[RMDB]
An RNA of 177 nucleotides, treated with 2A3 and read out base by base. For 2A3, 533 sequencing reads were counted.
RNA sequence: GGGAACGACUCGAGUAGAGUCGAAAAUAAUAAAGGUUGAACCACCCAUAUUAAAACAAUACCUAAUACCAAAACUAUUUUCAAAAAUUCUUAAUAGUUUUAAGAACAUCUACUUUGGAUGUAGAAACCGUACUUGAGGAUUCGUCCUCAAGUACGGAAAAGAAACAACAACAACAAC
Reactivity to 2A3 in 0.01 (KOAc 150mM, MgCl2 10mM, bicine 150mM(pH8.5), 24C), signal-to-noise 2, nucleotides 027 to 126: u070a000a000u040a030a190a030g050g000u000u120g110a010a040c000c030a000c010c030c040a000u010a080u150u250a100a070a020a060c080a090a150u150a200c000c020u130a090a070u140a220c070c060a050a020a030a020c020u020a030u040u000u120u180c050a050a040a160a220a300u230u130c080u080u210a010a030u040a120g030u070u000u000u070a070a050g000a000a000c030a060u000c000u000a120c090u070u150u190g050g000a000u060g010u010a030g070a070a000a000